The data come from the RNA Mapping Database (RMDB), library RFM100.
This 177-nucleotide RNA was probed chemically with DMS and 2A3.
Reactivities are given for positions 27 through 126.
For 2A3, 520 sequencing reads were counted.
RNA sequence: GGGAACGACUCGAGUAGAGUCGAAAAGGCCUCUUGGGCGGCGGCCACGCCGUGGUCCCCGGGGUCCUGAGUCCUUCGGGGCCCGGUUGCUCGGAAGUGAUGAAUUGAUCAGAUAGACGAGGCCGGGGUUGGACGCUUAUUUCGAUAAGCGUCCAACAAAAGAAACAACAACAACAAC
Reactivity to DMS in 0.01 (KOAc 150mM, MgCl2 10mM, bicine 150mM(pH8.5), 24C), signal-to-noise 1, nucleotides 027 to 126: g010g020c000c010u000c000u010u000g020g000g000c070g000g050c000g000g000c160c170a090c240g000c000c040g040u000g000g000u000c000c010c140c180g000g000g000g000u000c040c000u000g050a100g020u020c010c030u020u020c060g010g010g030g020c030c000c000g010g010u030u010g000c010u000c020g000g060a150a130g020u020g020a040u020g030a120a240u020u080g000a000u000c040a020g000a200u010a050g000a300c010g000a000g000g000c000c000g000g010g050
Reactivity to 2A3 in 0.01 (KOAc 150mM, MgCl2 10mM, bicine 150mM(pH8.5), 24C), signal-to-noise 1, nucleotides 027 to 126: g030g000c000c000u020c000u040u040g030g000g000c000g140g030c000g000g000c070c090a120c300g060c040c000g050u120g090g000u130c000c000c000c000g010g010g000g010u030c000c080u070g030a030g060u000c020c000u000u070c030g090g000g020g020c000c000c000g000g010u000u080g050c010u000c000g000g040a110a020g060u020g020a080u070g080a000a300u170u160g070a050u060c000a000g060a080u110a070g070a090c020g000a000g000g000c000c000g000g010g000